[RMDB]
RNA sequence: GGGAACGACUCGAGUAGAGUCGAAAAAUCAUCUCUGCCACAGUAAUGGCCUGUGGCUCAAUCAUCAGGUGCAACUGCCUCCAGAGAGUUCUGACACAGAGCAGAUUCAGAAGGGCCUUGAGAUGGCAUCCACACUGGAGCUGUAUGGCUAUGCCUACAGUCAUUUACGUUUCGACGUAAAUGACUGAAAAGAAACAACAACAACAAC
Reactivity to 2A3 in 0.01 (KOAc 150mM, MgCl2 10mM, bicine 150mM(pH8.5), 24C), signal-to-noise 4, nucleotides 027 to 156: a020u080c050a050u020c030u000c030u080g010c010c010a020c010a020g030u100a100a180u130g060g060c030c020u010g000u010g020g000c030u030c030a030a050u050c010a020u050c050a020g030g000u030g030c030a050a050c040u020g010c020c000u020c000c000a010g040a000g010a020g120u040u010c010u020g050a040c020a020c030a250g090a040g050c030a020g000a030u070u090c010a010g030a090a110g050g010g000c000c010u150u140g090a100g010a110u130g010g030c020a070u130c040c000a050c020a030c040u020g010g010a000g010c030u040g030u110a150u090g040g030c020u050a060u220g010c010c000u060a070
Reactivity to DMS in 0.01 (KOAc 150mM, MgCl2 10mM, bicine 150mM(pH8.5), 24C), signal-to-noise 2, nucleotides 027 to 156: a110u010c040a070u000c040u010c010u020g040c000c010a130c020a030g010u010a110a200u010g030g030c140c000u030g030u010g020g030c070u000c080a080a080u000c100a140u000c030a080g020g050u020g110c010a070a110c160u000g010c000c010u010c020c020a090g010a120g010a110g000u000u000c000u000g010a070c050a130c070a100g030a200g060c050a060g010a140u000u010c050a060g030a170a110g030g010g000c020c010u000u020g010a170g030a140u000g000g020c030a080u010c030c050a060c030a120c030u000g030g010a040g020c040u000g020u000a120u000g030g000c060u010a050u010g010c040c000u000a130